[RMDB]
This 177-nucleotide RNA was probed chemically with 2A3 and DMS. For 2A3 the reverse transcriptase was SuperScript II with manganese. The reactions ran in a buffer of 150 mM KOAc, 10 mM MgCl2 and 150 mM bicine (pH 8.5), at 24 C.
RNA sequence: GGGAACGACUCGAGUAGAGUCGAAAAGAAGAGCAGUCAGAUAAUCUUGUGCAGCAUGAAUGCUCGUAACUCCAUCGCACAAGUAGAUGUAGAUAACUUUAAUCUCGCAUAGCGGAGGAGCCGCAGAAUACUAUAUCCAUUUCGAUGGAUAUAGUAUAAAAGAAACAACAACAACAAC
Reactivity to 2A3 in 0.01 (KOAc 150mM, MgCl2 10mM, bicine 150mM(pH8.5), 24C), signal-to-noise 9, nucleotides 027 to 126: g110a050a010g010a000g010c020a010g050u090c030a010g040a210u130a120a120u130c020u020u040g010u030g020c040a050g020c010a050u070g060a150a030u070g040c020u020c040g020u030a040a040c010u010c030c010a050u040c030g000c000a010c010a060a020g020u060a040g050a070u080g050u100a010g020a080u080a090a030c020u080u090u150a080a050u050c010u010c020g050c070a090u100a110g010c010g010g020a080g040g040a030g060c000c000g000c010a010g090a070
Reactivity to DMS in 0.01 (KOAc 150mM, MgCl2 10mM, bicine 150mM(pH8.5), 24C), signal-to-noise 9, nucleotides 027 to 126: g010a110a080g000a030g010c010a040g010u010c020a080g010a130u030a090a090u020c020u010u000g000u000g010c020a110g020c150a100u010g010a050a050u010g010c010u010c070g000u030a060a110c040u000c020c010a070u020c040g010c010a040c070a040a050g010u020a060g000a050u000g010u020a040g000a050u020a070a110c150u020u020u020a090a070u000c010u000c040g020c120a100u020a100g000c010g000g000a150g000g010a070g020c020c020g000c080a110g010a100